[RMDB]
RNA sequence: GGGAACGACUCGAGUAGAGUCGAAAAGAUAUGGACUACUGGAGCUUGGAUUUAGACGUGGUCGGAAACGACCACGAGAACUUGUCAGCUCCUGUAGUCCUAAGUCAAAGAGUGGUUCGCCACUCAACUAUUACAAACACUUCGGUGUUUGUAAUAGAAAAGAAACAACAACAACAAC
Reactivity to 2A3 in 0.01 (KOAc 150mM, MgCl2 10mM, bicine 150mM(pH8.5), 24C), signal-to-noise 5, nucleotides 027 to 126: g020a000u060a020u130g000g010a010c010u010a000c000u030g030g010a010g020c060u150u220g280g070a170u300u280u250a060g030a110c000g000u000g010g010u000c010g000g000a040a060a010c010g000a000c000c000a000c010g000a000g010a020a040c020u050u040g100u190c080a000g010c000u000c000c000u000g010u000a000g000u000c000c000u010a000a000g000u000c020a050a100a060g010a010g000u010g040g050u060u150c270g080c100c000a000c000u010c000a000a020
Reactivity to DMS in 0.01 (KOAc 150mM, MgCl2 10mM, bicine 150mM(pH8.5), 24C), signal-to-noise 5, nucleotides 027 to 126: g010a040u000a300u010g000g010a010c000u000a000c000u000g000g000a020g000c010u000u000g010g010a040u000u010u000a030g030a160c010g020u000g010g020u000c000g000g010a070a090a180c000g020a020c000c000a000c000g010a050g000a060a080c050u000u000g000u000c050a040g010c000u000c000c000u010g000u000a000g000u000c000c000u000a000a060g000u000c020a090a110a150g000a010g030u000g000g000u000u010c260g020c000c000a010c000u000c010a040a130